Source information:
This 207-nucleotide RNA was probed chemically with 2A3 and DMS. For DMS the reverse transcriptase was MarathonRT. For DMS, 2,221 sequencing reads were counted. It was measured as part of the RMDB library RNAMAK. Reactivities are given for positions 27 through 156.

[RMDB]
RNA sequence: GGGAACGACUCGAGUAGAGUCGAAAAGGGGUCGGUAAGACAGGCUUAAAGGGAAGCGAAGGGCGUACUGAAGCCUCCACGGUACGCUGUUGACGCUUCCCGAUUGAGCCAAUGACGCCGACGGAGGCACCCAAAGUGUGCACUUCGGUGCACACAACUAAAUGACGAACUUCGGUUCGUCAUUUAGAAAAGAAACAACAACAACAAC
Reactivity to 2A3 in 0.01 (KOAc 150mM, MgCl2 10mM, bicine 150mM(pH8.5), 24C), signal-to-noise 2, nucleotides 027 to 156: g000g020g090g030u020c030g000g020u060a080a030g140a080c140a060g010g000c010u120u100a150a030a040g000g000g030a000a000g000c020g110a080a070g080g020g000c000g000u000a000c000u010g030a110a030g040c000c020u010c010c010a040c000g000g010u020a000c000g000c010u020g150u140u180g060a090c020g000c020u030u000c000c000c010g000a000u000u040g050a000g000c000c000a000a050u020g030a000c160g000c010c010g020a000c000g000g010a010g000g020c010a010c010c000c000a000a080a020g020u000g000u000g000c010a000c030u040u090c290g070g000u000g000c000a000c000a000c000a000a010
Reactivity to DMS in 0.01 (KOAc 150mM, MgCl2 10mM, bicine 150mM(pH8.5), 24C), signal-to-noise 1, nucleotides 027 to 156: g000g000g000g040u040c010g000g030u010a060a150g010a200c080a020g000g000c020u000u000a080a090a300g010g000g020a040a000g040c020g060a260a300g030g010g000c000g020u000a010c000u000g000a030a140g000c000c000u000c000c040a300c040g000g010u040a040c000g010c000u010g020u000u030g010a300c060g010c000u010u000c000c000c000g010a000u010u010g010a010g010c010c000a140a090u160g010a090c040g000c030c020g000a060c040g030g040a040g160g090c000a070c000c010c000a220a060a140g020u080g020u000g040c010a060c010u000u010c300g090g000u010g120c030a020c010a010c010a060a250